[RMDB]
RNA sequence: GGGAACGACUCGAGUAGAGUCGAAAAGACCCUAUAGAGCUUUACUGCAGGCUGUCGCUGGGACACGGUCGCUGAUGUGCAGAGUAGGUAGGAGACGUUACACAGGUACGUGCGCUAGCACGCCACCCCCCUUUCCUACAUUCGUGUAGGAAAGGGGAAAAGAAACAACAACAACAAC
Reactivity to DMS in 0.01 (KOAc 150mM, MgCl2 10mM, bicine 150mM(pH8.5), 24C), signal-to-noise 3, nucleotides 027 to 126: g000a190c020c000c020u030a280u040a060g010a100g040c010u000u000u030a070c060u000g030c040a120g000g010c000u000g010u010c070g000c030u030g000g030g000a160c100a120c130g040g000u000c030g070c040u020g010a090u000g000u000g000c010a120g000a160g010u000a070g000g020u000a090g000g010a060g020a080c080g020u000u010a030c070a130c150a110g010g000u020a100c040g000u000g050c020g030c130u030a100g020c020a030c000g010c030c050a070c070c050
Reactivity to 2A3 in 0.01 (KOAc 150mM, MgCl2 10mM, bicine 150mM(pH8.5), 24C), signal-to-noise 3, nucleotides 027 to 126: g040a000c000c000c010u010a050u060a100g080a030g030c020u050u080u100a120c090u070g030c040a050g040g040c030u040g030u050c010g030c050u040g000g060g030a040c030a010c040g090g010u020c030g000c050u000g020a090u040g060u040g040c020a020g020a010g100u040a050g010g050u000a010g030g020a040g010a010c060g020u020u020a050c080a010c000a070g000g080u090a050c020g020u010g000c000g000c070u000a020g010c010a000c030g040c010c010a040c020c000
This 177-nucleotide RNA was probed chemically with DMS and 2A3. For 2A3 the reverse transcriptase was SuperScript II with manganese. DMS adducts were read by reverse transcription with MarathonRT. Source: RMDB libraries RFM100 and RFMREP, as collected in RNAgym. The RNA was probed in 150 mM KOAc, 10 mM MgCl2 and 150 mM bicine (pH 8.5) at 24 C.